[RMDB]
RNA sequence: GGGAACGACUCGAGUAGAGUCGAAAAGAUGUGCUGAAUGCGCUCGAAGGCGAAGUGCGACUCGUGAAGGAUGAUGCGACCGUGGAACAGAUCGACGUCAUCGAUUUGCACGUUGUCGCGGUGCGGCCCACCAUCGUAUGUUCGCAUACGAUGGUGGAAAAGAAACAACAACAACAAC
Reactivity to 2A3 in 0.01 (KOAc 150mM, MgCl2 10mM, bicine 150mM(pH8.5), 24C), signal-to-noise 9, nucleotides 027 to 126: g110a070u150g020u020g020c040u040g090a200a130u200g020c020g000c030u050c080g070a100a050g070g000c030g030a110a020g110u080g120c010g020a020c000u000c040g020u050g060a060a030g090g010a030u040g000a020u060g010c010g000a010c010c040g070u130g070g030a130a080c050a060g030a060u020c010g140a170c020g080u030c010a030u010c010g120a260u030u040u200g050c020a010c030g070u090u100g010u000c000g000c010g010g010u070g020c010g010g010c000
Reactivity to DMS in 0.01 (KOAc 150mM, MgCl2 10mM, bicine 150mM(pH8.5), 24C), signal-to-noise 3, nucleotides 027 to 126: g000a120u040g060u000g000c010u000g000a120a100u030g000c000g010c030u020c050g000a090a110g020g000c010g020a130a080g000u020g020c020g000a010c030u000c020g000u000g010a090a090g010g030a020u010g020a020u000g020c000g010a010c020c060g010u040g000g000a140a210c220a130g010a030u000c000g040a130c100g010u000c070a040u010c000g000a090u010u010u020g020c020a000c010g020u020u000g010u000c000g020c010g000g010u000g010c050g010g000c070